[RMDB]
An RNA of 177 nucleotides, treated with DMS and read out base by base. Reactivities are rounded to 0.1 and cut off at 0 and 3. DMS adducts were read by reverse transcription with MarathonRT. The data come from the RNA Mapping Database (RMDB), library TTRDES.
RNA sequence: GGGAACGACUCGAGUAGAGUCGAAAAAAAGAUAUGGAAUUAUGGGAGGAUGAUUUCCCGUUGAAAGAAAUCGGAAACGAUUUCUGGAGGGAAAUACCAUCCGAAGAACAUAAUUCCUAAGUCAAAACUCACGUUAUAUCUUCGGAUAUAACGUGAGAAAAGAAACAACAACAACAAC
Reactivity to DMS in 0.01 (KOAc 150mM, MgCl2 10mM, bicine 150mM(pH8.5), 24C), signal-to-noise 2, nucleotides 027 to 126: a100a030a110g040a020u000a300u010g000g000a030a000u010u000a010u000g000g030g000a160g040g010a010u000g020a080u000u020u000c020c010c000g000u010u000g000a250a150a020g000a010a010a000u000c000g000g000a120a180a230c000g010a040u000u010u000c010u010g010g000a060g000g020g000a010a020a010u000a080c300c000a000u010c000c000g000a100a110g030a160a140c000a000u010a030a020u000u000c000c000u000a040a110g000u030c040a080a050a160a260
The RNA was probed in 150 mM KOAc, 10 mM MgCl2 and 150 mM bicine (pH 8.5) at 24 C.